[RMDB]
RNA sequence: GGGAACGACUCGAGUAGAGUCGAAAAGUUCAUCCCCUGAUCAAGGAUGCCCGAAACGGUGAGGCGGAAAGCAAAUUAAAUAACGUCAACCCAUCGGGACGGUUGGCCAGUUGAGAAGUGAGGAUUCAAAAGAUCGAACCGUUCGCGGUUCGAUCAAGUUAUGUUUUUGGUUCGCCAAAAACAUAACAAAAGAAACAACAACAACAAC
Reactivity to 2A3 in 0.01 (KOAc 150mM, MgCl2 10mM, bicine 150mM(pH8.5), 24C), signal-to-noise 5, nucleotides 027 to 156: g040u050u090c020a020u030c010c000c000c000u060g030a060u050c020a040a000g030g000a050u080g020c010c000c000g040a060a080a020c050g020g010u050g020a120g030g000c040g020g040a130a030a020g100c160a080a040a100u180u150a100a080a120u180a080a010c010g010u010c010a010a010c010c000c010a040u020c010g010g000g000a000c010g030g010u020u020g020g000c030c050a060g020u050u060g090a070g030a130a050g030u080g060a070g050g070a070u070u080c060a040a060a030a020g000a000u010c000g000a000a000c000c000g000u040u050c200g010c010g070g000u010u000c000g000a000u000c000a000a000
Reactivity to DMS in 0.01 (KOAc 150mM, MgCl2 10mM, bicine 150mM(pH8.5), 24C), signal-to-noise 2, nucleotides 027 to 156: g020u000u000c030a060u000c000c000c000c030u010g020a100u000c020a090a110g000g030a160u000g020c170c030c000g060a030a140a120c090g040g020u000g000a140g020g010c000g000g010a100a100a180g040c070a100a100a160u010u000a070a110a160u000a090a100c040g020u000c000a020a040c010c010c010a240u000c040g020g040g010a130c050g000g020u000u000g000g000c010c020a110g010u020u020g000a060g020a100a100g020u000g010a150g010g000a100u000u000c070a070a070a090a140g010a010u000c010g010a000a010c000c010g000u000u020c300g050c050g000g020u000u000c010g000a010u000c000a000a050